[RMDB]
RNA sequence: GGGAACGACUCGAGUAGAGUCGAAAAGAUAUGGACGACCCAUACCGCUUUCGCCGAGUCGGAAACGAUAUCGAAAGAACUACGGUUAAGGUCGUCCUAAGUCAAAACUCGCGGUUCGCCGCGAGAAGAUAGAAACAUUGUUCGCAAUGUUUCUAUCAAAAGAAACAACAACAACAAC
Reactivity to 2A3 in 0.01 (KOAc 150mM, MgCl2 10mM, bicine 150mM(pH8.5), 24C), signal-to-noise 8, nucleotides 027 to 126: g010a020u060a030u110g010g000a000c000g010a000c000c020c000a030u110a040c000c000g040c050u030u010u020c030g040c120c110g140a110g080u020c020g010g020a030a050a020c010g000a010u040a120u200c020g020a020a040a030g020a070a050c120u200a050c210g020g030u030u040a080a060g010g000u000c000g000u000c000c000u000a000a010g000u000c000a000a000a040a100c000u010c000g000c000g020g060u060u080c300g050c110c000g000c010g000a000g000a000a000
Reactivity to DMS in 0.01 (KOAc 150mM, MgCl2 10mM, bicine 150mM(pH8.5), 24C), signal-to-noise 8, nucleotides 027 to 126: g010a040u000a300u000g000g000a030c010g000a010c020c000c040a210u010a020c010c000g020c050u000u000u000c010g020c300c050g010a080g010u000c000g000g000a100a080a130c010g010a020u000a070u000c010g010a040a160a070g000a030a020c160u010a170c020g000g000u000u000a190a150g000g000u000c000g000u000c000c000u000a020a060g000u010c060a080a060a080a120c010u000c000g000c000g010g000u000u010c220g010c010c000g020c000g000a000g000a030a030
About this RNA:
The record gives the reactivity of an RNA of 177 nucleotides to 2A3 and DMS. 2A3 adducts were read by reverse transcription with SuperScript II with manganese. DMS (dimethyl sulfate) methylates the pairing face of unpaired adenines and cytosines.